[RMDB]
RNA sequence: GGGAACGACUCGAGUAGAGUCGAAAAUAUUUAUGAUUUUAUUUACAUGACAUAAUGGGAAAGGCAAAUCCAACCUGUAGUGACGGAAAGCAGAUCAGUGGUUGCUGACAGUGCGAGCAUUUACUGCGGACUAGAACUAGUUCGCUAGUUCUAGUCCAAAAGAAACAACAACAACAAC
Reactivity to DMS in 0.01 (KOAc 150mM, MgCl2 10mM, bicine 150mM(pH8.5), 24C), signal-to-noise 5, nucleotides 027 to 126: u010a050u000u010u000a060u030g000a150u000u010u000u000a090u020u030u010a140c050a100u010g000a080c040a030u010a030a040u010g010g000g010a040a060a090g010g010c080a030a080a070u000c040c040a060a140c080c030u000g010u000a080g010u000g000a060c070g010g010a060a090a100g020c030a030g010a060u010c050a060g020u000g010g010u000u010g020c050u000g000a060c110a040g020u010g000c050g010a070g010c060a050u000u010u010a070c080u000g000c300
Reactivity to 2A3 in 0.01 (KOAc 150mM, MgCl2 10mM, bicine 150mM(pH8.5), 24C), signal-to-noise 2, nucleotides 027 to 126: u030a010u060u210u080a150u080g020a090u130u120u070u050a190u090u060u170a080c040a080u100g040a010c000a010u090a040a090u150g020g020g010a080a060a030g020g000c040a000a030a090u000c010c020a020a050c010c010u050g000u120a060g020u030g050a010c020g040g020a030a040a000g010c020a010g040a070u040c010a000g050u060g040g110u090u090g020c040u000g040a030c000a000g050u020g040c050g070a020g040c040a050u070u050u170a100c060u010g020c030
Chemical mapping of a 177-nucleotide RNA with DMS and 2A3. Values cover nucleotides 27 to 126.